The record gives the reactivity of an RNA of 207 nucleotides to 2A3. Conditions: 150 mM KOAc, 10 mM MgCl2 and 150 mM bicine (pH 8.5), 24 C.

[RMDB]
RNA sequence: GGGAACGACUCGAGUAGAGUCGAAAAGAAAGAAAGAAAGAAGCCCUGCCUGGGGGCUGCCGCAAGGCGCUAUCAGGACGUGGAUUAGUCGGGCAGUGCCACGGUUCGAGCAAACCCCGACAGCCAAAAAACACACCCUCGUUCGCGAGGGUGUGAACAUAAUCGCAAUGUUCGCAUUGCGAUUAUGAAAAGAAACAACAACAACAAC
Reactivity to 2A3 in 0.01 (KOAc 150mM, MgCl2 10mM, bicine 150mM(pH8.5), 24C), signal-to-noise 1, nucleotides 027 to 156: g050a040a120a000g110a080a110a010g040a020a190a040g030a140a030g000c000c000c000u020g030c010c010u010g000g010g000g000g010c050u080g000c000c010g020c020a030a020g010g000c000g000c020u030a040u170c000a010g000g010a030c030g060u070g010g030a060u090u070a090g000u000c000g010g000g030c080a070g040u010g020c000c000a040c080g070g050u210u210c050g010a040g040c020a010a020a080c000c000c000c030g000a000c000a010g030c050c020a000a030a030a030a150a000c010a000c000a010c000c000c000u000c010g000u080u040c140g010c000g100a000g000g000g000u000g010u000g000a000a000
For 2A3, 1,117 sequencing reads were counted.